This 177-nucleotide RNA was probed chemically with DMS and 2A3.

[RMDB]
RNA sequence: GGGAACGACUCGAGUAGAGUCGAAAAAUUAGCAGUUUCGGGGGCGUAAUGCCCUCAGCUGAUUCUCAAACUCUGAACAGGUGAGUCAUAUUAAUUCUCUUUAUUGGAUUUUGGUAUUAAAUGAUGCCCUAUAUGCCUGCUUCGGCAGGCAUAUAGGAAAAGAAACAACAACAACAAC
Reactivity to DMS in 0.01 (KOAc 150mM, MgCl2 10mM, bicine 150mM(pH8.5), 24C), signal-to-noise 1, nucleotides 027 to 126: a080u000u000a030g000c000a070g000u000u010u060c130g000g000g000g000g000c000g070u030a120a130u030g030c000c000c000u000c000a000g000c000u010g000a040u000u020c020u010c140a120a160a020c050u000c040u020g000a190a090c100a070g000g040u010g010a050g040u030c000a090u000a010u030u010a050a050u000u000c030u000c040u000u000u000a060u000u010g000g000a180u000u000u030u000g010g000u000a020u000u000a050a040a110u050g000a030u000g000c040
Reactivity to 2A3 in 0.01 (KOAc 150mM, MgCl2 10mM, bicine 150mM(pH8.5), 24C), signal-to-noise 3, nucleotides 027 to 126: a020u160u190a030g010c010a020g060u000u120u200c080g030g000g000g000g010c000g060u120a000a080u280g020c000c000c000u030c000a010g000c020u020g000a030u040u020c010u010c010a010a090a000c070u040c030u110g100a140a000c030a010g080g070u080g040a070g010u020c030a020u050a040u080u200a070a020u080u000c040u000c000u110u150u210a160u120u090g180g000a150u090u220u040u140g090g000u050a050u040u030a060a080a040u100g040a010u060g010c010
About this RNA: Conditions: 150 mM KOAc, 10 mM MgCl2 and 150 mM bicine (pH 8.5), 24 C. 2A3 adducts were read by reverse transcription with SuperScript II with manganese.